The record gives the reactivity of an RNA of 207 nucleotides to 2A3 and DMS. The RNA was probed in 150 mM KOAc, 10 mM MgCl2 and 150 mM bicine (pH 8.5) at 24 C. The 2A3 profile rests on 3,192 reads.
RNA sequence: GGGAACGACUCGAGUAGAGUCGAAAACGGCUUUCGAGCCGCACUUUCCGUAGGUUUACUCGAGCGAGUGAACUACUCGUCGGUGGUUCGAAAGAGCCACGGACGAGCACUCGCUAAGACAGGUAAACCUAAACGGCUUAGACUACUUCGGUAGUAACUUUAAGACCGUAUUCGUACGGUCUUAAAGAAAAGAAACAACAACAACAAC
Reactivity to 2A3 in 0.01 (KOAc 150mM, MgCl2 10mM, bicine 150mM(pH8.5), 24C), signal-to-noise 3, nucleotides 027 to 156: c000g000g030c020u090u110u200c300g090a010g020c000c000g040c040a130c040u070u100u060c010c010g000u020a000g020g010u010u000u000a030c030u040c080g020a000g010c000g000a000g000u000g010a040a040c050u170a090c010u300c010g000u000c080g210g000u010g000g020u010u000c010g030a110a030a080g000a010g010c020c000a000c020g050g000a000c000g000a000g000c000a000c000u000c000g000c000u010a030a020g020a050c080a030g000g040u000a000a010a010c000c000u010a030a040a000c030g050g000c040u060u120a050g050a120c000u040a000c000u020u050c230g050g000u030a000g020u060a050a120
Reactivity to DMS in 0.01 (KOAc 150mM, MgCl2 10mM, bicine 150mM(pH8.5), 24C), signal-to-noise 1, nucleotides 027 to 156: c000g040g000c000u000u010u000c230g020a060g020c000c010g020c000a020c050u000u000u000c000c010g030u000a020g030g000u000u000u000a010c010u000c020g010a030g060c040g040a070g010u000g000a080a140c070u010a110c030u000c010g040u000c000g000g090u000g030g000u000u000c010g000a160a220a280g000a030g020c030c000a000c010g010g030a000c000g000a030g000c000a000c040u000c020g000c000u000a080a040g120a190c300a090g000g020u000a000a010a010c010c000u000a020a020a070c020g000g010c090u020u000a150g020a090c000u000a000c020u000u010c290g040g000u000a020g000u000a060a130